Structure probing data (2A3) for a 207-nucleotide construct. The RNA was probed in 150 mM KOAc, 10 mM MgCl2 and 150 mM bicine (pH 8.5) at 24 C. Values cover nucleotides 27 to 156.
[RMDB]
RNA sequence: GGGAACGACUCGAGUAGAGUCGAAAAAGAUAAUAUUAAUCACUUAUGAUUACCUUACAAUUUGUAACAUCUCUAUAUUAUCAUGAGUACUUAAAAAUAAUUUCACAAGGAAAAUCAUAGAGUGUGUGGACGCCUGGAGUGCAGGGAGCUCAAAGAGUCUUACAGCAAGGUUCGCCUUGCUGUAAGAAAAAGAAACAACAACAACAAC
Reactivity to 2A3 in 0.01 (KOAc 150mM, MgCl2 10mM, bicine 150mM(pH8.5), 24C), signal-to-noise 1, nucleotides 027 to 156: a000g080a000u160a130a000u140a130u220u150a140a000u080c020a000c000u000u000a000u030g020a020u020u020a060c000c020u010u000a020c070a080a140u210u130u070g080u160a130a000c050a240u140c090u000c030u050a080u020a090u300u070a080u190c080a130u080g060a030g020u090a020c070u080u140a020a080a000a080a000u130a050a150u030u110u150c020a020c110a130a060g000g000a080a000a160a000u030c020a050u080a020g250a000g000u000g000u000g050u060g020g030a020c020g000c030c000u050g080g070a060g030u050g000c000a020g000g000g000a000g000c030u050c020a030a000a000g100a000g110